[RMDB]
RNA sequence: GGGAACGACUCGAGUAGAGUCGAAAACUUUUUGCAUUUAAACUGUCUAUCCAUUACUGCCGCCUUCAUGAAGGGCUGCAUCGUGAAGUCUGAAGAGAAAAACCAUUAAACCUCACAACCUCUUCCCCGAUCAGCUCAUUGACCUGCUGCAGGCGCGCUUCAACGAAUUCUUCGGAAUUCGUUGAAGAAAAGAAACAACAACAACAAC
Reactivity to 2A3 in 0.01 (KOAc 150mM, MgCl2 10mM, bicine 150mM(pH8.5), 24C), signal-to-noise 1, nucleotides 027 to 156: c000u240u130u090u170u150g060c040a140u060u080u280a130a120a070c010u030g030u120c050u090a180u020c030c010a060u110u160a080c010u060g010c000c010g050c000c010u050u060c050a060u190g050a130a020g000g000g000c000u000g000c020a000u000c010g020u050g080a120a070g150u070c180u190g080a040a010g060a060g030a160a090a000a000a000c080c010a090u190u180a170a250a090c000c040u020c080a100c090a090a090c080c000u000c000u030u000c010c000c000c010g000a000u000c010a000g010c000u010c130a080u000u030g050a010c050c080u120g000c010u000g060c020a010g030g040c010g000c090g010
This 207-nucleotide RNA was probed chemically with 2A3. For 2A3 the reverse transcriptase was SuperScript II with manganese. For 2A3, 313 sequencing reads were counted. It was measured as part of the RMDB library OK3TST.